The record gives the reactivity of an RNA of 177 nucleotides to 2A3 and DMS. Source: RMDB library TTRDEL, as collected in RNAgym. The RNA was probed in 150 mM KOAc, 10 mM MgCl2 and 150 mM bicine (pH 8.5) at 24 C. 2A3 adducts were read by reverse transcription with SuperScript II with manganese.
RNA sequence: GGGAACGACUCGAGUAGAGUCGAAAAGAUAUGGAACACCAAGCUAGAUCUGUCGGAAACGACUGAUCUUGGACCUUGAUGUUCCUAAGUCAAAAGUUAGGUUCUCUCUUCGGAGAGAACCUAACAAGCUUACUCUUAGGUUCGCCUAAGAGUAAGCAAAAGAAACAACAACAACAAC
Reactivity to 2A3 in 0.01 (KOAc 150mM, MgCl2 10mM, bicine 150mM(pH8.5), 24C), signal-to-noise 2, nucleotides 027 to 126: g010a010u050a000u130g010g000a000a000c000a000c010c000a000a000g020c020u050a000g010a000u000c000u030g000u000c000g010g070a090a020a050c010g010a000c000u020g000a010u010c010u010u100g080g060a030c010c010u000u020g000a010u010g010u000u010c010c000u010a050a010g030u020c020a070a080a050a110g010u000u010a000g000g000u010u000c010u000c000u010c010u050u160c300g040g000a000g000a000g000a000a000c000c000u000a000a000c000a000a010
Reactivity to DMS in 0.01 (KOAc 150mM, MgCl2 10mM, bicine 150mM(pH8.5), 24C), signal-to-noise 3, nucleotides 027 to 126: g000a030u000a300u000g020g000a000a020c000a010c020c000a000a010g000c030u000a010g010a010u000c010u000g010u000c000g000g000a070a060a130c000g010a010c000u000g010a000u000c000u000u010g050g010a120c270c000u000u000g030a020u000g000u000u000c000c000u000a020a080g000u020c050a060a060a120a170g010u000u000a000g000g010u000u000c000u000c000u000c010u000u010c250g010g010a010g000a000g000a000a000c000c000u000a010a000c000a060a120